Overview: Structure probing data (DMS) for a 177-nucleotide construct. For DMS the reverse transcriptase was MarathonRT. The data come from the RNA Mapping Database (RMDB), library TTRDEL. Conditions: 150 mM KOAc, 10 mM MgCl2 and 150 mM bicine (pH 8.5), 24 C. The DMS profile rests on 703 reads. Reactivities are given for positions 27 through 126.

RNA sequence: GGGAACGACUCGAGUAGAGUCGAAAAGAUAUGGAUUCAGGACAUGGUCCGCAUCGGAAACGAUGCGCGACCAACAGCCUGACGGUCCUAAGUCAAACCGCCUUCCUCCUUCGGGAGGAAGGCGGAACAUGCUGGCUAGGUUCGCCUAGCCAGCAUGAAAAGAAACAACAACAACAAC
Reactivity to DMS in 0.01 (KOAc 150mM, MgCl2 10mM, bicine 150mM(pH8.5), 24C), signal-to-noise 1, nucleotides 027 to 126: g020a040u010a130u000g000g000a020u000u010c000a000g000g030a080c140a210u000g020g000u000c000c000g020c000a000u000c000g010g000a030a020a090c020g010a000u000g000c000g000c300g000a000c000c000a020a030c120a120g000c000c000u000g020a070c300g050g000u040c020c000u000a010a110g000u010c060a060a040a110c000c000g000c000c000u000u020c000c000u000c010c000u000u000c180g010g000g040a000g010g010a000a010g000g000c000g010g000a000a060